The record gives the reactivity of an RNA of 177 nucleotides to DMS and 2A3.
RNA sequence: GGGAACGACUCGAGUAGAGUCGAAAAUCAGAAGGGCUCACAGAGACACCCUACCGUGCCCUAACCCAGUAGCCGGCCUCCUGACACCCUCCCUGGGACUGGUGUGGGACCCAGCCCCGGUAAAAUGGUUCCCCCUCUAAUUCGUUAGAGGGGGAACAAAAGAAACAACAACAACAAC
Reactivity to DMS in 0.01 (KOAc 150mM, MgCl2 10mM, bicine 150mM(pH8.5), 24C), signal-to-noise 2, nucleotides 027 to 126: u030c070a220g070a180a050g000g000g030c170u000c070a140c030a070g050a260g000a160c260a140c050c010c010u000a070c050c070g040u000g010c040c000c010u040a130a050c050c000c050a160g000u020a100g000c000c020g020g000c000c030u010c060c000u000g000a110c200a100c010c010c000u030c000c010c010u000g010g020g020a060c000u000g000g000u000g010u030g000g000g010a120c160c000c000a000g000c050c000c030c010g010g000u030a070a050a030a080u030g000
Reactivity to 2A3 in 0.01 (KOAc 150mM, MgCl2 10mM, bicine 150mM(pH8.5), 24C), signal-to-noise 3, nucleotides 027 to 126: u100c030a040g090a160a060g090g020g000c040u070c060a100c040a020g110a010g020a070c020a100c050c000c030u030a060c020c050g060u060g030c010c000c000u020a050a060c030c000c000a030g070u100a030g030c020c010g020g000c000c000u000c000c010u020g020a010c000a070c050c000c010u020c000c000c030u010g000g000g070a090c010u010g000g010u020g020u060g010g080g020a010c000c000c000a000g000c000c000c000c000g000g010u120a090a080a030a090u080g050